[RMDB]
RNA sequence: GGGAACGACUCGAGUAGAGUCGAAAACUCGGUCAUGGAGAAGGCCGAGCGGAUUUCGCCGUUCAGCAGGGGAAGGAGCCACUGCUCCUGCUGCUCGGGCGUGCCGUAGCGGGCAAUGACUUCCAUGCUUCUUUUAGAGUUUCGACUCUAAAAGAAGAAAAGAAACAACAACAACAAC
Reactivity to 2A3 in 0.01 (KOAc 150mM, MgCl2 10mM, bicine 150mM(pH8.5), 24C), signal-to-noise 9, nucleotides 027 to 126: c010u010c020g050g050u090c020a020u040g030g020a070g030a130a080g070g010c000c010g000a010g000c000g000g000a040u290u240u060c010g000c000c010g000u010u010c000a000g000c000a000g000g010g000g030a030a040g060g080a080g140c090c050a140c060u050g010c000u000c000c000u000g000c000u000g000c000u000c040g190g010g000c010g000u010g000c000c010g030u090a190g300c060g020g020g010c040a050a160u130g050a080c000u080u010c020c000a010u030g020
Reactivity to DMS in 0.01 (KOAc 150mM, MgCl2 10mM, bicine 150mM(pH8.5), 24C), signal-to-noise 9, nucleotides 027 to 126: c010u000c020g020g020u010c010a020u000g000g010a070g010a210a160g010g010c000c000g010a300g000c000g010g000a090u000u010u000c010g030c000c000g000u000u000c010a010g020c000a020g000g000g000g000a070a020g010g000a220g020c230c210a130c030u000g000c000u000c000c000u000g000c000u000g010c020u000c010g040g010g010c010g020u000g000c000c000g000u000a100g010c040g000g010g000c020a070a100u010g010a150c090u000u000c000c010a040u000g000

This 177-nucleotide RNA was probed chemically with 2A3 and DMS. The RNA was probed in 150 mM KOAc, 10 mM MgCl2 and 150 mM bicine (pH 8.5) at 24 C. For 2A3 the reverse transcriptase was SuperScript II with manganese. It was measured as part of the RMDB library OK2TST.